RNA sequence: GGGAACGACUCGAGUAGAGUCGAAAACCACAGAUCUUCGGAUCUGUGGAAACAACAAAUACUGUCAGUUGAGACAGACACAAAUAGAUUGAGUGUACAAUGAAAGCGAUUGCUUCGGCAAUCGCAAUCGAAGGCAGAUGUUCGCAUCUGCCUUCGAAAAAGAAACAACAACAACAAC
Reactivity to 2A3 in 0.01 (KOAc 150mM, MgCl2 10mM, bicine 150mM(pH8.5), 24C), signal-to-noise 1, nucleotides 027 to 126: c000c000a000c000a000g010a010u030c000u070u190c300g050g000a010u000c000u020g010u010g000g000a050a080a000c010a020a000c010a000a090a060u300a160c030u020g000u030c010a170g030u140u110g150a070g010a060c030a000g030a000c010a000c000a050a140a030u190a080g120a150u050u110g110a040g030u020g000u070a020c120a070a150u160g060a190a130a000g000c030g010a010u020u000g000c000u010u120c250g080g000c000a020a000u000c000g020c000a010a000
Reactivity to DMS in 0.01 (KOAc 150mM, MgCl2 10mM, bicine 150mM(pH8.5), 24C), signal-to-noise 1, nucleotides 027 to 126: c010c000a000c010a010g010a010u000c010u000u000c220g030g030a000u000c000u000g030u000g000g000a030a050a050c110a050a100c070a100a060a040u000a150c030u000g020u000c000a090g050u000u000g010a300g010a000c000a020g000a070c040a030c060a060a100a190u000a050g030a110u000u000g000a160g000u010g020u000a050c240a040a050u000g010a040a050a160g030c000g000a030u040u000g000c000u000u000c120g010g010c000a000a000u000c000g000c000a000a010